[RMDB]
RNA sequence: GGGAACGACUCGAGUAGAGUCGAAAAUUAAAAGAGAUUGUACUUCACUUGUGAAAGCUUAGAGUACAUCAGAAGCAGAAGAGUCUGUUUUUUUGAUAAAUGUGUUAGAGCAUCGGUUUUACCAGGCAAACACAUGAGGUUUCGACCUCAUGUGUUUAAAAGAAACAACAACAACAAC
Reactivity to DMS in 0.01 (KOAc 150mM, MgCl2 10mM, bicine 150mM(pH8.5), 24C), signal-to-noise 4, nucleotides 027 to 126: u020u020a060a060a110a110g010a130g010a040u010u020g030u000a010c020u010u010c300a140c020u000u000g000u070g010a110a020a030g010c120u010u010a140g000a030g000u000a010c030a040u000c030a050g020a040a050g010c060a040g000a050a190g000a200g000u010c010u000g000u000u000u000u000u000u000u000g000a070u010a040a070a060u010g010u000g010u020u020a080g010a120g000c030a060u010c080g000g000u010u020u000u000a150c050c020a090g010g010c190
Reactivity to 2A3 in 0.01 (KOAc 150mM, MgCl2 10mM, bicine 150mM(pH8.5), 24C), signal-to-noise 4, nucleotides 027 to 126: u080u050a010a020a050a010g100a000g030a050u120u070g000u020a020c000u060u130c090a040c060u010u050g010u060g170a180a030a010g010c040u080u060a060g020a000g030u010a010c020a020u020c020a010g030a040a000g010c070a000g010a140a020g070a090g210u060c030u010g110u000u030u000u010u040u080u070g020a040u070a060a130a040u090g040u020g070u130u110a050g030a010g050c010a020u030c020g030g040u000u000u000u070a020c000c000a000g050g000c040